[RMDB]
RNA sequence: GGGAACGACUCGAGUAGAGUCGAAAAGGCGCGACGUUCGCGUCGCGCCAAAGCGCCUUGCCUGCUUCGGGCCAGAAACAGGCACAGGGACCGGAGGCAACUAAAGUACUUCGUUCGCGAAGUACAAGUAGUGAAUAUCGUUCGCGAUAUUCACUACAAAAGAAACAACAACAACAAC
Reactivity to 2A3 in 0.01 (KOAc 150mM, MgCl2 10mM, bicine 150mM(pH8.5), 24C), signal-to-noise 1, nucleotides 027 to 126: g000g000c010g060c010g010a060c120g030u150u150c230g000c030g160u060c040g070c000g100c000c030a000a000a000g000c040g030c040c000u000u010g010c000c000u020g010c000u000u020c020g080g060g120c080c000a060g000a000a020a010c010a000g040g010c010a010c050a000g010g000g020a010c000c030g080g020a030g050g020c040a040a030c040u190a240a100a000g010u000a000c010u000u010c000g060u000u040c180g040c010g090a000a000g000u000a000c000a000a030
Reactivity to DMS in 0.01 (KOAc 150mM, MgCl2 10mM, bicine 150mM(pH8.5), 24C), signal-to-noise 1, nucleotides 027 to 126: g020g090c020g050c000g070a070c090g060u000u000c100g020c010g050u000c020g000c050g060c000c000a030a040a080g030c210g060c020c010u000u000g020c000c010u000g000c040u000u000c010g000g000g040c240c130a110g020a020a020a020c010a010g010g000c000a020c230a040g020g020g010a080c010c020g010g000a080g000g010c050a060a080c120u000a110a130a120g000u000a000c000u000u000c000g010u000u010c190g020c010g020a030a000g010u000a020c010a010a090